[RMDB]
RNA sequence: GGGAACGACUCGAGUAGAGUCGAAAAUGGAGAAGUACUCUGCCACUUGCAGGCUCAUCUUCUCCUGCUCCAAUGUGUCCAAGGUGAUCGACCCCCUGCGCAGCAGAUGCUUGUGUGUGAGAGUGCCCCUACUACCAGACUUCGGUCUGGUAGUAGGAAAAGAAACAACAACAACAAC
Reactivity to 2A3 in 0.01 (KOAc 150mM, MgCl2 10mM, bicine 150mM(pH8.5), 24C), signal-to-noise 1, nucleotides 027 to 126: u100g010g010a030g010a010a010g020u040a040c030u020c030u020g040c000c060a300c120u070u300g000c100a030g020g040c030u050c060a080u060c010u040u000c000u000c030c000u000g000c010u090c020c030a050a100u150g030u060g060u050c010c020a080a080g070g000u070g000a110u160c050g090a170c000c020c000c020c040u000g000c030g020c020a020g000c020a010g000a240u120g020c040u060u050g030u040g000u000g000u020g040a060g000a000g060u040g030c010c000
Reactivity to DMS in 0.01 (KOAc 150mM, MgCl2 10mM, bicine 150mM(pH8.5), 24C), signal-to-noise 5, nucleotides 027 to 126: u000g020g010a010g010a040a030g000u010a110c220u020c030u000g000c020c200a130c220u010u010g010c140a120g000g000c110u000c110a080u010c010u000u000c000u000c020c000u000g010c120u000c010c040a070a090u000g000u000g020u000c030c040a100a110g010g010u010g010a080u010c050g000a200c040c010c020c030c030u000g020c070g040c040a070g000c060a050g010a070u000g010c040u000u000g010u000g010u000g010u010g010a100g010a100g000u000g000c050c070